[RMDB]
RNA sequence: GGGAACGACUCGAGUAGAGUCGAAAAUUAAUUGGACUCUGGGAAGACGAUGUUCAGAAAUCCGUUAUGGAGGCUAGAAGCUAUACACCUGGCAUCUUCGUUUUCUAGAUGUAUCUAGUCAAGGGGGACGGACUAACCUAUUCGUAGGUUAGUCCGUAAAAGAAACAACAACAACAAC
Reactivity to DMS in 0.01 (KOAc 150mM, MgCl2 10mM, bicine 150mM(pH8.5), 24C), signal-to-noise 2, nucleotides 027 to 126: u000u000a050a040u010u010g000g000a020c020u000c000u010g000g020g010a030a060g010a040c060g010a040u000g020u000u000c010a060g010a080a110a170u000c030c010g010u010u010a100u020g010g010a050g000g000c010u000a090g010a110a150g010c040u000a120u010a090c190a070c200c020u000g000g010c050a020u000c030u000u000c070g010u000u000u000u000c000u000a030g000a030u000g010u010a060u000c010u000a010g010u010c050a070a090g000g000g020g000g000
Reactivity to 2A3 in 0.01 (KOAc 150mM, MgCl2 10mM, bicine 150mM(pH8.5), 24C), signal-to-noise 2, nucleotides 027 to 126: u030u020a020a060u030u040g040g030a010c000u000c010u000g030g000g030a080a020g010a010c020g000a020u050g040u120u210c020a000g000a020a050a000u020c010c020g030u080u140a170u300g030g000a000g040g000c000u030a060g080a300a070g040c030u040a060u000a220c030a030c040c030u010g000g000c000a020u010c020u080u020c030g110u000u000u050u060c040u010a010g000a010u070g050u070a080u000c030u020a010g030u080c080a050a060g010g010g000g000g000